Record summary:
Source: RMDB library RFMREP, as collected in RNAgym. Structure probing data (DMS) for a 177-nucleotide construct. In probing experiments dimethyl sulfate is read out at A N1 and C N3, which are open when not base-paired. Reactivities are given for positions 27 through 126. The reactions ran in a buffer of 150 mM KOAc, 10 mM MgCl2 and 150 mM bicine (pH 8.5), at 24 C.
[RMDB]
RNA sequence: GGGAACGACUCGAGUAGAGUCGAAAAAUUUCCAGAGAUGGCAUGGAAACAUGUCAAUCGGCAGCAAGCGAAGGUGUCUUUUACACCCGUGGUACAGUCACCCCGGCCGUACCACGUUUUUUUAUUAGAAGUAAGUAUCGUUCGCGAUACUUACUUCAAAAGAAACAACAACAACAAC
Reactivity to DMS in 0.01 (KOAc 150mM, MgCl2 10mM, bicine 150mM(pH8.5), 24C), signal-to-noise 1, nucleotides 027 to 126: a200u000u010u020c000c020a210g000a150g010a070u000g000g000c000a000u010g000g000a180a060a250c000a000u000g000u010c010a070a020u010c000g010g020c090a080g010c100a100a040g030c070g000a070a030g000g000u010g020u010c140u000u010u020u010a040c040a050c000c030c000g020u010g010g010u000a000c010a030g010u000c010a230c100c020c060c080g000g010c020c030g000u000a010c000c000a010c000g010u000u000u000u000u000u000u000a050u010u020a140